Description:
The record gives the reactivity of an RNA of 177 nucleotides to 2A3 and DMS. 2A3 adducts were read by reverse transcription with SuperScript II with manganese. The RNA was probed in 150 mM KOAc, 10 mM MgCl2 and 150 mM bicine (pH 8.5) at 24 C.
RNA sequence: GGGAACGACUCGAGUAGAGUCGAAAAUGCCGUUGUACUGUUAUGAGCGCAGUGAUCCAAUGAGGAGAGAAAUGAGGCGCCAAGGGAAACAUAAGUUAGAUUGUUAAAGGCUAGGCGCAUAGCCGGAGCCCCAUAUUUAUUUCGAUAAAUAUGGGGCAAAAGAAACAACAACAACAAC
Reactivity to 2A3 in 0.01 (KOAc 150mM, MgCl2 10mM, bicine 150mM(pH8.5), 24C), signal-to-noise 3, nucleotides 027 to 126: u100g050c030c000g000u000u020g050u090a050c020u010g060u130u060a120u260g050a060g030c020g010c020a020g010u040g050a100u020c020c050a110a130u140g070a080g090g000a020g000a010g030a020a070a080u210g000a080g040g050c010g000c010c040a000a080g110g030g000a020a050a020c040a100u120a130a010g030u010u040a060g000a260u040u020g030u030u050a080a100a000g000g010c010u000a010g010g020c070g010c100a080u050a020g000c010c000g000g000a000
Reactivity to DMS in 0.01 (KOAc 150mM, MgCl2 10mM, bicine 150mM(pH8.5), 24C), signal-to-noise 4, nucleotides 027 to 126: u060g010c040c010g040u010u010g000u000a060c110u010g000u010u010a100u000g020a040g020c050g000c050a030g010u000g010a070u000c040c050a120a070u070g000a120g000g000a060g000a130g010a100a050a110u030g000a110g010g010c050g020c040c020a070a090g000g000g010a120a070a070c090a050u020a050a070g010u010u000a060g000a150u000u000g010u000u010a060a100a090g000g000c000u000a020g010g010c050g010c050a060u000a010g010c020c000g000g010a250